Chemical mapping of a 177-nucleotide RNA with DMS and 2A3. The 2A3 profile rests on 1,813 reads. The RNA was probed in 150 mM KOAc, 10 mM MgCl2 and 150 mM bicine (pH 8.5) at 24 C. Values cover nucleotides 27 to 126.
RNA sequence: GGGAACGACUCGAGUAGAGUCGAAAAACGUAUUUCUUGCUGACCGGCCGGAUUGCCUGCGAAUCCCGCUUCAACAGUGAGGGGAACAGUCCUGCUCAGCCUCUGCUGACAAUACCCUGCCGACGUGGUUCUCUUAGGCAUUCGUGCCUAAGAGAACAAAAGAAACAACAACAACAAC
Reactivity to DMS in 0.01 (KOAc 150mM, MgCl2 10mM, bicine 150mM(pH8.5), 24C), signal-to-noise 3, nucleotides 027 to 126: a120c120g000u000a050u000u000u010c020u000u000g000c030u010g010a120c140c110g000g020c020c080g010g020a050u010u000g020c050c020u020g040c040g000a060a090u010c030c000c060g020c110u020u010c150a060a100c100a060g020u000g030a080g020g030g000g000a110a060c130a050g010u000c010c060u000g030c110u000c020a070g010c020c090u000c100u010g010c030u000g010a030c130a060a090u000a070c020c010c010u000g000c040c040g010a090c090g020u000g020
Reactivity to 2A3 in 0.01 (KOAc 150mM, MgCl2 10mM, bicine 150mM(pH8.5), 24C), signal-to-noise 2, nucleotides 027 to 126: a000c070g030u120a100u010u040u030c050u060u070g060c030u040g050a080c070c000g020g060c010c020g070g030a050u000u090g060c020c020u060g020c020g010a020a050u020c010c010c060g000c000u100u090c050a140a090c020a100g060u060g120a080g000g010g010g040a000a060c020a030g070u030c010c030u030g040c020u010c010a010g000c000c020u120c050u110g040c010u000g010a010c020a000a030u060a100c000c010c030u010g070c040c010g090a140c060g110u090g010